RNA sequence: GGGAACGACUCGAGUAGAGUCGAAAAGAUAUGGAAUCUGAACGCUGAUGACCCACACCGAGUUCGGAAACGAAUAGUGUGUGGCAAGGCGACAGAUUCCUAAGUCAAAGGUUGGUUCGCCAACCAAGAAGAUGCAGGAGUUCGCUCCUGCAUCUUCAAAAGAAACAACAACAACAAC
Reactivity to 2A3 in 0.01 (KOAc 150mM, MgCl2 10mM, bicine 150mM(pH8.5), 24C), signal-to-noise 1, nucleotides 027 to 126: g000a000u020a020u080g000g010a010a040u000c000u000g050a300a110c010g000c000u070g020a300u080g080a140c000c000c000a000c020a000c000c050g090a070g200u070u050c020g020g040a000a030a000c000g010a000a000u080a080g130u160g000u020g010u000g190g000c000a010a030g020g010c000g000a000c000a010g000a000u000u000c000c000u000a000a010g020u040c040a160a060a060g020g070u020u000g000g030u010u070c190g070c070c000a030a000c060c020a000a020
Reactivity to DMS in 0.01 (KOAc 150mM, MgCl2 10mM, bicine 150mM(pH8.5), 24C), signal-to-noise 1, nucleotides 027 to 126: g000a070u000a080u020g000g010a080a000u000c000u010g040a170a160c000g020c000u000g000a040u030g040a070c300c000c000a030c000a000c000c060g020a120g040u000u010c000g030g000a030a010a060c000g040a040a010u000a200g050u000g010u000g000u010g020g040c010a020a040g020g010c000g010a130c000a000g000a020u000u000c000c000u000a020a080g000u000c020a090a160a120g000g010u010u000g000g010u040u000c300g000c000c010a000a000c000c000a080a030
This 177-nucleotide RNA was probed chemically with 2A3 and DMS. For 2A3, 1,642 sequencing reads were counted. It was measured as part of the RMDB library TTRDEL.